RNA sequence: GGGAACGACUCGAGUAGAGUCGAAAAUUGGUCUCUUUGGGCUAAUCUCUGGCUCCUCUGCACUAACUCUUGCUCUCACCCAGCUAAUCCCUGCCUCGCCCUGGCUGCCCCAGGGGCUGACCAUUAACUUUAACGUAUUUUUCGAAAUACGUUAAAGAAAAGAAACAACAACAACAAC
Reactivity to DMS in 0.01 (KOAc 150mM, MgCl2 10mM, bicine 150mM(pH8.5), 24C), signal-to-noise 9, nucleotides 027 to 126: u010u010g010g010u000c010u000c100u000u010u010g010g010g010c040u000a060a080u010c050u000c050u010g010g000c030u000c020c030u000c030u010g010c050a080c070u010a070a110c070u000c030u000u010g000c030u000c020u000c060a100c050c030c030a070g010c060u010a080a110u010c020c010c010u000g010c040c020u000c080g010c020c020c010u000g000g010c060u010g000c060c070c010c120a100g010g010g010g010c030u010g000a080c040c040a070u010u010a060a170
Reactivity to 2A3 in 0.01 (KOAc 150mM, MgCl2 10mM, bicine 150mM(pH8.5), 24C), signal-to-noise 9, nucleotides 027 to 126: u070u050g040g000u020c020u010c000u090u050u090g050g000g000c030u040a040a050u090c030u010c030u060g050g000c010u020c010c010u020c020u040g030c030a030c070u080a130a020c010u050c020u050u080g020c000u010c000u010c030a050c010c010c010a010g010c020u040a050a070u060c010c000c000u020g020c000c010u030c020g030c000c000c010u010g030g000c040u060g030c000c000c010c020a030g030g000g010g000c030u030g020a030c010c010a040u090u090a060a060

An RNA of 177 nucleotides, treated with DMS and 2A3 and read out base by base. The reactions ran in a buffer of 150 mM KOAc, 10 mM MgCl2 and 150 mM bicine (pH 8.5), at 24 C. For 2A3 the reverse transcriptase was SuperScript II with manganese. DMS adducts were read by reverse transcription with MarathonRT.